[RMDB]
Source information:
An RNA of 177 nucleotides, treated with 2A3 and DMS and read out base by base. The 2A3 profile rests on 11,614 reads. DMS adducts were read by reverse transcription with MarathonRT. For 2A3 the reverse transcriptase was SuperScript II with manganese.
RNA sequence: GGGAACGACUCGAGUAGAGUCGAAAAGUGAUGCGCUCUCGAAGAGUCGAGUUGUUUGGGAAUGCAGCUCAAAAUGGGUGGUAAAUUCCAUCUAAAGCUAAAUAUUGGCGAGAGACCGAUAGCGAACUAACUUUAAGAUCUUCGGAUCUUAAAGUUAAAAAGAAACAACAACAACAAC
Reactivity to 2A3 in 0.01 (KOAc 150mM, MgCl2 10mM, bicine 150mM(pH8.5), 24C), signal-to-noise 7, nucleotides 027 to 126: g060u060g050a090u130g030c040g000c040u010c000u010c010g090a140a090g020a030g120u060c040g000a000g000u020u020g030u020u070u090g090g020g030a060a040u070g000c010a010g000c010u010c000a050a060a020a080u100g010g010g010u020g020g000u040a140a200a130u200u010c010c000a000u010c010u040a080a050a010g020c020u040a040a110a110u220a170u100u100g040g000c020g010a090g000a010g020a140c040c030g040a040u040a020g030c010g010a020a010c020
Reactivity to DMS in 0.01 (KOAc 150mM, MgCl2 10mM, bicine 150mM(pH8.5), 24C), signal-to-noise 8, nucleotides 027 to 126: g020u010g010a100u010g010c060g010c030u000c010u000c030g010a290a120g010a070g020u000c080g010a050g020u000u010g000u000u000u000g010g010g010a110a080u010g010c060a040g000c010u000c060a060a050a110a120u000g010g000g020u000g000g010u000a070a100a180u010u010c000c000a020u000c010u000a050a080a140g010c050u010a060a080a110u000a120u000u010g010g010c020g010a120g000a110g000a080c100c020g000a050u000a100g010c050g000a090a090c130